[RMDB]
RNA sequence: GGGAACGACUCGAGUAGAGUCGAAAAGGAAUCCCCCAAGCUGCCAACAGAGGAAGAAACAAGACAGAGGAGCCCCCAUGACGCUGGUGAACCAUCGCGAGCUGGGAGAGGAGAGGCGAAGAUAGCAAUACUGUCGCGUUCGCGCGACAGAAAAGAAACAACAACAACAAC
Reactivity to 2A3 in 0.01 (KOAc 150mM, MgCl2 10mM, bicine 150mM(pH8.5), 24C), signal-to-noise 1, nucleotides 027 to 129: g140g030a030a070u070c020c000c000c000c000a030a010g100c090u110g000c060c000a030a010c000a160g000a010g100g000a050a040g000a000a110a040c110a030a040g020a000c000a000g020a020g030g000a000g010c000c000c000c000c000a040u000g000a010c000g000c060u060g000g000u030g000a030a000c000c000a020u010c010g000c020g020a040g000c030u040g000g000g020a020g050a000g010g010a000g010a000g000g000c040g020a000a000g060a030u180a090g010c030a060a000u070a070
Reactivity to DMS in 0.01 (KOAc 150mM, MgCl2 10mM, bicine 150mM(pH8.5), 24C), signal-to-noise 1, nucleotides 027 to 129: g050g000a120a100u000c080c000c030c050c030a000a000g070c040u050g020c090c090a140a140c050a130g050a050g000g010a020a050g010a020a060a110c090a130a000g000a120c140a170g000a030g000g070a100g000c030c050c000c000c110a130u040g000a010c210g060c000u050g060g000u000g000a000a000c090c040a080u080c080g000c020g040a070g050c140u050g030g000g020a070g000a000g050g020a040g060a060g030g020c180g020a040a050g040a090u060a000g080c090a030a110u060a180
The record gives the reactivity of an RNA of 170 nucleotides to 2A3 and DMS. Reactivities are given for positions 27 through 129. As a SHAPE reagent, 2A3 marks flexible, mostly unpaired nucleotides at the ribose 2'-OH. The DMS profile rests on 4,011 reads. DMS adducts were read by reverse transcription with MarathonRT. For 2A3 the reverse transcriptase was SuperScript II with manganese. For 2A3, 1,889 sequencing reads were counted. The RNA was probed in 150 mM KOAc, 10 mM MgCl2 and 150 mM bicine (pH 8.5) at 24 C. Source: RMDB library 15KLIB, as collected in RNAgym.